The record gives the reactivity of an RNA of 207 nucleotides to 2A3 and DMS. The RNA was probed in 150 mM KOAc, 10 mM MgCl2 and 150 mM bicine (pH 8.5) at 24 C. For DMS, 7,790 sequencing reads were counted. 2A3 adducts were read by reverse transcription with SuperScript II with manganese.
RNA sequence: GGGAACGACUCGAGUAGAGUCGAAAACUCGCGAACCCAUCGAGGCGUGGGGAGCGACAUGAAUCAGCCUCGAUUAGAUGUGGUCGACGGUACGGCGGCGUACAGCGACCUAGUUAGAAGCCGCAAAACCGGAAGAGAUGACGCUCGACGGACGUCACAUCAUUAAUCGAUUCGUCGAUUAAUGAUGAAAAGAAACAACAACAACAAC
Reactivity to 2A3 in 0.01 (KOAc 150mM, MgCl2 10mM, bicine 150mM(pH8.5), 24C), signal-to-noise 7, nucleotides 027 to 156: c020u020c010g000c010g020a130a110c000c000c000a010u030c040g010a010g020g000c030g020u040g000g020g020g010a040g010c030g030a040c050a140u300g080a110a120u150c050a060g000c000c010u010c020g020a070u100u160a080g110a130u140g080u090g090g010u020c020g030a090c030g030g000u020a020c050g040g010c010g010g010c010g020u080a020c020a010g010c000g030a090c020c010u010a010g000u000u020a040g010a130a010g000c010c010g000c000a030a040a030a090c030c010g050g030a090a010g050a010g010a050u070g010a000c010g040c070u010c030g040a030c050g020g030a020c020g000u010c010a010
Reactivity to DMS in 0.01 (KOAc 150mM, MgCl2 10mM, bicine 150mM(pH8.5), 24C), signal-to-noise 4, nucleotides 027 to 156: c040u010c010g000c020g030a140a290c000c000c000a200u000c030g020a030g090g050c040g000u000g030g000g020g010a220g010c030g000a200c110a070u000g050a110a120u000c070a130g030c000c010u000c010g010a130u000u030a090g010a130u010g010u000g030g000u000c010g000a060c040g030g040u000a020c040g020g040c120g010g000c010g020u000a100c050a150g010c010g020a100c020c030u000a050g010u000u020a130g010a080a130g010c000c000g030c020a040a030a100a090c040c010g000g010a100a130g000a170g000a140u000g010a030c010g020c010u000c050g040a100c050g000g000a050c010g010u000c020a120